[RMDB]
RNA sequence: GGGAACGACUCGAGUAGAGUCGAAAAGUAGCCAGGGCCUGGAGCCGGAUGCUGAGAACGAGGCCUGCAACUCAUUUCCCCAUUAAACAUUCUGAGAACAUCUGCACCGGUUUCCAAGGCUUCUCCCAAAUCAUAGGAUUUUCGAAUCCUAUGAUUUAAAAGAAACAACAACAACAAC
Reactivity to 2A3 in 0.01 (KOAc 150mM, MgCl2 10mM, bicine 150mM(pH8.5), 24C), signal-to-noise 9, nucleotides 027 to 126: g070u050a020g070c070c070a060g020g020g010c000c010u010g000g000a010g000c010c000g010g010a120u020g000c020u050g020a020g020a100a030c070g030a030g030g010c000c010u020g010c030a050a080c010u010c050a050u020u030u020c010c000c010c020a080u180u260a080a090a040c040a070u150u070c050u110g060a050g030a140a030c030a110u010c010u020g000c000a010c010c000g000g000u050u220u010c020c000a060a020g010g000c030u040u000c020u010c000c000c000
Reactivity to DMS in 0.01 (KOAc 150mM, MgCl2 10mM, bicine 150mM(pH8.5), 24C), signal-to-noise 9, nucleotides 027 to 126: g010u010a080g010c120c100a140g000g000g010c030c010u000g000g000a030g000c010c010g010g010a110u010g010c010u010g000a050g010a100a110c100g010a110g000g010c040c020u000g010c060a060a090c040u010c040a090u010u000u000c010c000c000c140a130u030u030a060a090a110c140a070u010u010c070u020g000a150g000a120a140c100a100u000c020u000g000c020a040c000c010g000g010u000u020u010c010c010a030a070g010g000c000u000u010c050u010c010c010c020
This 177-nucleotide RNA was probed chemically with 2A3 and DMS. It was measured as part of the RMDB libraries RFM100 and RFMREP.